[RMDB]
This 177-nucleotide RNA was probed chemically with 2A3 and DMS. The 2A3 profile rests on 4,100 reads. For DMS the reverse transcriptase was MarathonRT. For 2A3 the reverse transcriptase was SuperScript II with manganese.
RNA sequence: GGGAACGACUCGAGUAGAGUCGAAAAGAUAUGGAUCGUUGCUUUUGACGAGCCAUAUGUCGGAAACGACAUUAAGCUCGAUAAGCACCGAUCCUAAGUCAAAGAGAAAACGUUCGCGUUUUCUCAACAAAUGUUCGUGGUUCGCCACGAACAUUUGAAAAGAAACAACAACAACAAC
Reactivity to 2A3 in 0.01 (KOAc 150mM, MgCl2 10mM, bicine 150mM(pH8.5), 24C), signal-to-noise 3, nucleotides 027 to 126: g030a020u030a030u110g020g000a020u010c000g010u010u010g010c010u180u120u140u300g300a260c110g010a000g000c000c000a110u080a020u130g000u010c020g000g010a050a030a060c010g010a010c000a000u040u060a150a040g030c010u030c030g140a160u050a130a000g000c000a000c000c000g000a000u000c000c000u000a040a010g000u020c030a080a250a000g010a010g000a020a030a010a000c010g000u120u150c300g030c040g160u000u040u020u000c000u000c020a000a010
Reactivity to DMS in 0.01 (KOAc 150mM, MgCl2 10mM, bicine 150mM(pH8.5), 24C), signal-to-noise 3, nucleotides 027 to 126: g010a020u000a300u000g000g000a000u000c000g010u000u000g010c010u000u000u010u010g030a230c130g010a010g000c000c000a110u010a000u000g020u000c000g010g020a100a070a140c000g000a000c000a010u000u010a210a150g000c010u000c010g020a130u000a010a030g000c000a020c050c000g000a030u000c000c000u000a010a090g000u010c010a070a100a190g000a020g000a010a000a010a000c000g030u000u020c230g030c030g020u000u000u000u000c000u000c000a090a190